The data come from the RNA Mapping Database (RMDB), library OK2TST. Chemical mapping of a 177-nucleotide RNA with 2A3 and DMS. For 2A3, 1,509 sequencing reads were counted. 2A3 adducts were read by reverse transcription with SuperScript II with manganese. Conditions: 150 mM KOAc, 10 mM MgCl2 and 150 mM bicine (pH 8.5), 24 C. For DMS the reverse transcriptase was MarathonRT.
[RMDB]
RNA sequence: GGGAACGACUCGAGUAGAGUCGAAAAUGGGAGUAUCGUGCGCGUAGACGACCUGGAGUAUGACUUUCAAACGAAAGCAACCAACGUGGAGUAUAGCCAUGAAGGGCAGCACAUGUCUGUACAGCCGGAAUAAGCAGGUGUUCGCACCUGCUUAUUCAAAAGAAACAACAACAACAAC
Reactivity to 2A3 in 0.01 (KOAc 150mM, MgCl2 10mM, bicine 150mM(pH8.5), 24C), signal-to-noise 2, nucleotides 027 to 126: u060g060g030g000a000g060u020a060u180c100g000u080g100c030g000c020g050u050a040g010a090c020g050a050c000c020u030g080g030a070g050u100a120u220g180a280c000u050u010u040c070a240a210a080c120g030a080a030a000g000c010a020a010c020c000a010a050c080g060u060g000g040a040g050u060a040u070a070g110c020c000a040u060g050a060a090g030g010g000c010a000g000c000a030c000a040u050g020u090c020u000g030u040a060c040a030g070c020c030g040
Reactivity to DMS in 0.01 (KOAc 150mM, MgCl2 10mM, bicine 150mM(pH8.5), 24C), signal-to-noise 3, nucleotides 027 to 126: u010g000g010g000a110g000u000a070u000c040g010u000g010c040g040c070g050u010a070g000a100c090g000a110c050c020u010g010g020a080g000u000a060u000g000a130c040u000u000u000c040a060a160a150c220g000a040a030a030g000c040a140a110c050c020a070a150c110g010u010g000g000a180g010u000a060u010a060g000c020c010a010u010g010a060a100g010g000g020c010a050g000c070a090c040a040u000g010u000c020u000g030u000a040c060a100g030c070c040g010